The record gives the reactivity of an RNA of 207 nucleotides to DMS and 2A3.
The DMS profile rests on 16,044 reads.
2A3 adducts were read by reverse transcription with SuperScript II with manganese.
It was measured as part of the RMDB library OK3TST.
For 2A3, 11,881 sequencing reads were counted.
Conditions: 150 mM KOAc, 10 mM MgCl2 and 150 mM bicine (pH 8.5), 24 C.
[RMDB]
RNA sequence: GGGAACGACUCGAGUAGAGUCGAAAACAGUGCCUUGAUUCCACAACAAAGCUGAUCCAGCUGUUCACUGCCUGGACUAGAAAUAGACUGCCCAGAUCCAACAAUUCAGAAUCAACAGGAUUCUGCAUCUGCCCAUAUACAGAACAGCAGAGCAGGACUAAUGCAUAAUCUUCGGAUUAUGCAUUAGAAAAGAAACAACAACAACAAC
Reactivity to DMS in 0.01 (KOAc 150mM, MgCl2 10mM, bicine 150mM(pH8.5), 24C), signal-to-noise 6, nucleotides 027 to 156: c060a090g010u010g020c020c050u010u010g000a150u000u000c020c020a110c040a110a130c060a080a100a100g010c010u000g020a070u000c030c020a140g020c000u000g000u000u000c070a100c060u000g000c040c010u000g010g020a080c020u000a080g010a090a090a100u000a100g000a090c040u000g000c010c010c010a100g010a070u010c030c000a060a090c060a050a130u000u010c040a060g010a080a050u000c010a100a100c110a150g010g000a160u000u000c000u000g010c030a130u000c010u000g000c000c020c060a100u020a130u010a250c110a110g010a080a090c070a060g020c010a080g000a110g010c010a040g010g010a160
Reactivity to 2A3 in 0.01 (KOAc 150mM, MgCl2 10mM, bicine 150mM(pH8.5), 24C), signal-to-noise 9, nucleotides 027 to 156: c030a020g030u020g070c010c030u060u050g030a070u110u050c030c030a070c030a130a080c040a070a150a040g020c030u030g030a140u050c040c010a010g020c030u060g060u160u100c080a090c130u050g030c020c010u020g010g020a030c020u070a040g080a020a080a020u080a040g070a040c040u050g020c010c020c010a030g020a060u050c040c010a040a060c020a090a080u140u160c050a050g050a070a070u050c030a030a120c030a080g120g050a050u040u000c010u010g010c000a270u000c000u010g010c000c000c030a060u110a010u040a150c080a020g150a190a020c020a030g000c000a000g000a000g000c010a010g000g010a010